[RMDB]
RNA sequence: GGGAACGACUCGAGUAGAGUCGAAAACAUCGUUGCAAGAGCGUGGGUGACCUGGCCGGCGUCGACGCCAACUGCCGAGAAAGACUGCUACGGCCUGCUGUACCAAUGUCCCGGCGCGACCGCGCUCGGUGGUCGUCAUAUUCGUAUGACGACCACCAAAAGAAACAACAACAACAAC
Reactivity to DMS in 0.01 (KOAc 150mM, MgCl2 10mM, bicine 150mM(pH8.5), 24C), signal-to-noise 1, nucleotides 027 to 126: c080a070u000c090g010u010u010g000c070a150a100g000a080g020c040g060u010g000g060g030u000g060a050c040c080u000g000g020c080c030g000g000c120g000u000c040g040a080c180g000c040c050a030a080c080u000g060c090c170g020a060g000a250a070a130g020a050c150u030g020c060u000a140c090g000g000c000c050u010g010c090u000g010u010a090c060c030a050a040u010g010u020c000c030c040g030g000c050g030c060g000a060c050c040g010c060g000c010u010c080
Reactivity to 2A3 in 0.01 (KOAc 150mM, MgCl2 10mM, bicine 150mM(pH8.5), 24C), signal-to-noise 2, nucleotides 027 to 126: c010a080u150c060g110u080u180g030c030a150a120g030a010g030c020g070u120g070g000g070u140g040a120c010c080u040g110g000c000c060g020g040c080g090u010c090g030a030c040g010c010c000a040a040c060u130g000c030c070g060a030g150a110a140a000g060a100c040u080g020c050u210a110c030g010g000c000c040u040g060c040u000g050u080a090c070c080a080a120u080g090u090c080c000c000g010g040c040g030c010g050a050c060c040g000c000g000c030u000c000
The record gives the reactivity of an RNA of 177 nucleotides to DMS and 2A3.
For DMS the reverse transcriptase was MarathonRT.
The DMS profile rests on 718 reads.
The data come from the RNA Mapping Database (RMDB), library OK2TST.